[RMDB]
RNA sequence: GGGAACGACUCGAGUAGAGUCGAAAACGGUAUUGGUCAAGGCUAUACCGACAGCGCACCUUCAAAAGGGCGCUUAAUCCCCGGCCAAGCGCCGAAAUAUGAAUAGACACCGCUGGGCUGGUAGGGUAAAACAUGGCGAUCUUCGGAUCGCCAUGAACGAUAAUUUAUCCUUCGGGAUAAAUUAUCGAAAAGAAACAACAACAACAAC
Reactivity to 2A3 in 0.01 (KOAc 150mM, MgCl2 10mM, bicine 150mM(pH8.5), 24C), signal-to-noise 2, nucleotides 027 to 156: c010g000g020u010a030u040u170g000g000u020c020a050a070g200g010c000u000a000u000a030c000c000g000a040c040a000g000c010g000c030a300c110c020u080u080c080a080a050a030a050g000g010g000c000g000c010u000u010a010a000u010c000c020c010c000g050g000c000c000a050a010g000c010g000c050c000g050a030a080a000u240a100u110g120a090a040u060a060g060a060c040a010c040c010g000c010u010g000g000g040c000u010g000g040u040a050g020g060g040u060a040a090a030a020c000a000u000g000g020c000g000a000u000c000u000u020c040g090g000a020u020c000g000c000c000a000u000g020a000a000
Reactivity to DMS in 0.01 (KOAc 150mM, MgCl2 10mM, bicine 150mM(pH8.5), 24C), signal-to-noise 1, nucleotides 027 to 156: c040g010g040u000a030u000u010g120g010u000c030a080a190g030g000c070u000a100u000a010c020c030g010a150c060a040g030c030g000c010a110c030c020u020u000c110a130a160a230a170g000g050g020c010g030c030u000u010a030a130u000c010c000c000c030g000g030c030c020a100a050g070c020g010c000c050g040a030a100a110u000a150u000g010a180a210u000a180g000a140c050a120c180c000g010c010u040g010g090g020c080u010g030g030u000a050g010g050g000u020a070a190a090a190c010a000u010g040g000c020g030a040u010c000u020u020c300g050g070a020u000c010g040c000c010a000u010g000a020a070
The record gives the reactivity of an RNA of 207 nucleotides to 2A3 and DMS.
High DMS reactivity at an A or C suggests that its Watson-Crick edge is free.
The reactions ran in a buffer of 150 mM KOAc, 10 mM MgCl2 and 150 mM bicine (pH 8.5), at 24 C.
Values cover nucleotides 27 to 156.